[RMDB]
RNA sequence: GGGAACGACUCGAGUAGAGUCGAAAAAUAGGCUUAUCAAGAGAGGUGGAGGUACUGGCCCGAUGAAACCCGGCAGCCAGAAAUGGUGCCCAUUCCUGCAGCGGAAACGUUGAAAGAUGAGCCGAUGACACCAUCGGGUUCGCCCGAUGGAAAAGAAACAACAACAACAAC
Reactivity to 2A3 in 0.01 (KOAc 150mM, MgCl2 10mM, bicine 150mM(pH8.5), 24C), signal-to-noise 7, nucleotides 027 to 129: a000u090a010g000g000c000u010u010a010u020c030a100a020g150a010g010a010g120g000u050g020g040a250g030g020u000a020c000u020g010g000c000c000c000g020a030u180g060a060a040a030c020c020c000g000g000c040a010g030c020c000a000g040a030a050a030u180g070g000u070g000c000c000c000a020u080u060c000c000u020g010c010a010g000c000g020g000a070a030a030c010g000u000u050g040a080a050a020g000a010u010g000a000g000c010c000g000a030u070g010a000c000a020
Reactivity to DMS in 0.01 (KOAc 150mM, MgCl2 10mM, bicine 150mM(pH8.5), 24C), signal-to-noise 8, nucleotides 027 to 129: a080u020a080g040g010c020u000u020a030u020c060a100a100g000a060g030a060g000g010u040g000g000a140g000g040u000a040c070u000g010g010c030c030c040g050a090u060g020a080a100a100c230c110c040g000g000c130a130g020c020c030a000g020a070a070a060u000g010g040u040g020c050c010c060a180u050u030c000c000u000g000c040a040g030c040g000g030a110a070a080c000g040u000u000g030a070a100a150g010a000u030g000a040g000c000c020g020a100u030g010a080c140a130